The record gives the reactivity of an RNA of 207 nucleotides to 2A3 and DMS. The RNA was probed in 150 mM KOAc, 10 mM MgCl2 and 150 mM bicine (pH 8.5) at 24 C.

[RMDB]
RNA sequence: GGGAACGACUCGAGUAGAGUCGAAAAGUGAUAUCAUCGACGUUGUCAGAAAGUUACAAAAUAAAGGCAACCAAGUAUGGACUUAUGUCGAACAACAUCCAACUCUAACACAGUUCAGACAUUACAAUCAAACCCUCAUCCUAAACCUAUGGGUAAAAAAAGUAAAUCACUUCGGUGAUUUACUUUUAAAAGAAACAACAACAACAAC
Reactivity to 2A3 in 0.01 (KOAc 150mM, MgCl2 10mM, bicine 150mM(pH8.5), 24C), signal-to-noise 3, nucleotides 027 to 156: g060u020g030a070u050a010u090c030a010u040c020g020a040c050g020u010u020g000u010c030a040g150a140a170a020g080u090u170a140c100a110a130a050a050u180a050a080a030g000g000c000a010a020c010c010a030a010g060u050a100u080g040g000a030c060u120u060a020u070g010u000c000g030a040a000c040a020a060c010a060u070c030c030a080a100c090u080c060u160a080a010c040a000c010a080g010u030u020c020a030g000a040c000a030u030u080a080c080a090a070u050c020a040a080a190c000c010c020u070c020a140u080c000c000u080a120a120a080c010c000u060a100u170g000g010g060u130a070a000a040
Reactivity to DMS in 0.01 (KOAc 150mM, MgCl2 10mM, bicine 150mM(pH8.5), 24C), signal-to-noise 2, nucleotides 027 to 156: g000u000g000a110u000a100u030c090a090u000c030g010a140c100g000u000u000g010u010c020a150g030a090a140a170g010u010u010a220c080a050a040a120a180u000a080a150a090g000g030c010a060a060c030c060a020a110g000u000a080u000g010g020a020c030u000u000a050u010g050u000c060g020a140a140c040a140a110c020a300u030c030c000a020a060c060u000c040u020a050a060c090a050c100a030g010u040u000c030a230g020a010c060a010u010u000a080c020a080a060u000c060a050a110a100c030c000c020u000c060a100u000c020c010u000a040a030a040c090c020u000a050u010g000g030g050u030a010a000a030
For 2A3 the reverse transcriptase was SuperScript II with manganese.
In probing experiments dimethyl sulfate is read out at A N1 and C N3, which are open when not base-paired.